An RNA of 177 nucleotides, treated with 2A3 and DMS and read out base by base. For DMS the reverse transcriptase was MarathonRT. The 2A3 profile rests on 3,004 reads. It was measured as part of the RMDB library OK1LIB. High DMS reactivity at an A or C suggests that its Watson-Crick edge is free. Reactivities are given for positions 27 through 126.
[RMDB]
RNA sequence: GGGAACGACUCGAGUAGAGUCGAAAAAUCUGGGCGCAGAUCACGCUGCCCUUGGCGCCGGACCCCUACCCUGGUCAUAACCCCGAUCGGCCGCCGUCGAGGUUCUACGUUCGGGUGAUCAGCCCCGUCGUAAAUCGCUAUUCGUAGCGAUUUACGAAAAAGAAACAACAACAACAAC
Reactivity to 2A3 in 0.01 (KOAc 150mM, MgCl2 10mM, bicine 150mM(pH8.5), 24C), signal-to-noise 4, nucleotides 027 to 126: a000u060c050u070g020g010g020c040g010c120a050g040a120u070c020a000c080g220c030u060g010c020c000c000u000u050g040g000c030g000c020c000g110g040a220c010c010c010c000u070a120c040c020c010u040g020g010u030c020a060u080a140a120c010c000c020c020g040a030u030c010g050g010c010c020g000c010c000g040u050c030g000a020g040g000u050u100c060u110a020c020g090u120u080c000g030g000g020u040g020a060u030c030a030g020c010c000c010c010g040
Reactivity to DMS in 0.01 (KOAc 150mM, MgCl2 10mM, bicine 150mM(pH8.5), 24C), signal-to-noise 2, nucleotides 027 to 126: a100u020c030u010g020g000g030c080g020c040a040g020a050u010c090a080c070g000c000u020g000c070c010c000u000u010g000g030c070g040c130c010g000g000a080c040c000c030c040u010a060c050c020c010u000g000g000u040c050a040u030a210a200c170c000c040c050g020a080u020c040g010g020c050c020g040c230c040g010u060c070g000a080g000g000u000u000c010u010a080c040g010u010u020c030g000g000g000u020g010a040u010c020a090g000c040c000c010c050g000